[RMDB]
RNA sequence: GGGAACGACUCGAGUAGAGUCGAAAAGCGCAUCACAGAGCUGGCGCCUGAACGCCGUCGCUUUGGUUAUCGGCGGAUCUGGCAGUUAUUGCGUCGUGAGGGCCUUCACGUUAACCACAAGCGGGUACGCGUUUAUCGUAUUCGUACGAUAAACGCGAAAAGAAACAACAACAACAAC
Reactivity to 2A3 in 0.01 (KOAc 150mM, MgCl2 10mM, bicine 150mM(pH8.5), 24C), signal-to-noise 4, nucleotides 027 to 126: g030c010g000c030a080u010c020a040c040a070g090a000g050c040u040g030g000c020g020c000c010u030g010a060a020c060g000c020c010g060u090c020g020c030u080u080u120g080g000u090u090a060u100c020g000g000c030g020g040a170u020c040u040g030g000c020a070g030u060u120a150u200u180g030c060g050u060c050g010u100g060a050g000g090g010c020c000u070u070c060a050c070g030u050u040a080a040c010c000a030c050a100a010g050c090g010g050g000u060a030
Reactivity to DMS in 0.01 (KOAc 150mM, MgCl2 10mM, bicine 150mM(pH8.5), 24C), signal-to-noise 4, nucleotides 027 to 126: g010c070g000c040a090u000c050a080c070a120g030a160g010c020u000g010g010c060g000c020c030u000g000a070a090c100g010c020c010g020u000c170g030c080u010u010u000g020g000u000u010a050u000c010g010g000c100g010g000a090u000c040u010g010g000c010a090g020u010u010a100u010u000g020c020g010u000c050g000u000g010a070g000g020g010c020c050u000u000c060a070c050g010u000u010a040a090c010c030a070c140a050a080g030c060g020g000g020u000a100